RNA sequence: GGGAACGACUCGAGUAGAGUCGAAAACCUGGUGAAGGGAGAUUCCGGAACGUUUAGCAUUUGAGGGACAAAGCCGCCCCCGGGCGCUCCCCUCGGAGAUGUUCCAGGUGGGUUCACAUCCCCAACCGUCGAUCAAACUUCGGUUUGAUCAAAAGAAACAACAACAACAAC
Reactivity to 2A3 in 0.01 (KOAc 150mM, MgCl2 10mM, bicine 150mM(pH8.5), 24C), signal-to-noise 9, nucleotides 027 to 129: c000c000u010g010g010u030g020a070a050g010g010g000a050g000a040u140u030c030c000g010g000a010a000c010g010u030u100u190a120g050c120a180u070u050u190g020a020g010g010g010a030c050a060a080a010g040c100c030g010c010c030c000c010c040g030g000g000c010g000c000u020c000c000c000c000u000c000g010g000a050g010a020u040g020u030u000c010c000a020g060g070u110g050g050g020u120u100c050a050c010a140u060c000c000c000c000a010a020c010c020g150u170c100
Reactivity to DMS in 0.01 (KOAc 150mM, MgCl2 10mM, bicine 150mM(pH8.5), 24C), signal-to-noise 9, nucleotides 027 to 129: c030c010u010g000g030u020g030a090a120g010g030g010a080g000a120u000u050c040c020g010g000a060a020c030g030u030u020u000a080g050c130a160u010u030u030g000a040g000g000g000a030c050a090a110a070g020c040c030g000c020c020c030c150c230g030g020g030c040g030c030u030c070c010c010c020u020c040g020g020a060g020a050u040g010u010u010c020c020a030g000g000u060g020g020g010u030u040c050a060c140a210u040c000c000c000c000a140a050c030c020g000u060c100